[RMDB]
RNA sequence: GGGAACGACUCGAGUAGAGUCGAAAAGCGUUUGGCGGCAUGUAUCUGGAUCUGGACGUGCAGUGUUUCCGGCCGAGCGAUCCGUGGCUGGCGGGCGCGGAUUUGGUUCUGCAAAGCGAGUACAAGGCAAUACGGGUACGUUCGCGUACCCGUAUUGAAAAGAAACAACAACAACAAC
Reactivity to 2A3 in 0.01 (KOAc 150mM, MgCl2 10mM, bicine 150mM(pH8.5), 24C), signal-to-noise 2, nucleotides 027 to 126: g030c040g000u040u050u100g100g030c020g020g010c050a050u120g030u110a160u050c100u140g070g020a060u020c030u080g080g020a030c020g080u130g000c040a060g060u050g060u120u110u030c000c000g000g000c000c000g040a100g140c050g010a030u020c020c010g030u030g070g040c010u030g030g070c000g040g000g000c020g000c000g010g000a000u040u010u050g040g000u040u000c000u010g020c000a040a110a020g090c000g010a010g010u030a100c020a060a040g100g000
Reactivity to DMS in 0.01 (KOAc 150mM, MgCl2 10mM, bicine 150mM(pH8.5), 24C), signal-to-noise 4, nucleotides 027 to 126: g020c050g020u000u000u010g000g010c020g020g020c030a050u020g020u010a080u010c060u000g030g010a060u010c060u010g020g020a090c080g030u000g010c050a070g010u010g010u000u000u000c030c020g000g010c000c020g000a120g020c100g000a030u000c010c020g020u000g000g010c030u000g010g010c070g020g010g000c070g010c030g000g000a140u000u000u000g000g010u010u010c010u000g000c040a080a090a130g010c050g000a070g020u000a060c130a070a110g010g000